[RMDB]
RNA sequence: GGGAACGACUCGAGUAGAGUCGAAAAGAUAUGGAGCGAAUGUAAAGUCGGAUAGUGGAACUACUUAUACGAAUCGGAAACGAUUCGAUAAGCCACUAUCCGACUUUACACAAUUCGCUCCUAAGUCCAUCCUGAGUAGGUUCGCCUACUCAGGAUGAAAAGAAACAACAACAACAAC
Reactivity to DMS in 0.01 (KOAc 150mM, MgCl2 10mM, bicine 150mM(pH8.5), 24C), signal-to-noise 2, nucleotides 027 to 126: g000a110u020a300u000g020g000a010g010c000g010a010a040u010g030u000a000a000a010g040u000c000g030g000a020u000a010g000u000g000g010a060a030c120u020a300c000u000u000a000u000a170c020g000a000a020u000c000g000g010a140a070a280c010g010a000u010u000c000g000a010u000a000a000g000c000c000a000c000u000a000u000c000c010g000a000c000u000u000u000a010c020a060c170a300a190u000u000c000g000c000u000c010c010u000a000a100g010u000c000
The record gives the reactivity of an RNA of 177 nucleotides to DMS. Source: RMDB library TTRINS, as collected in RNAgym. Values cover nucleotides 27 to 126. Conditions: 150 mM KOAc, 10 mM MgCl2 and 150 mM bicine (pH 8.5), 24 C.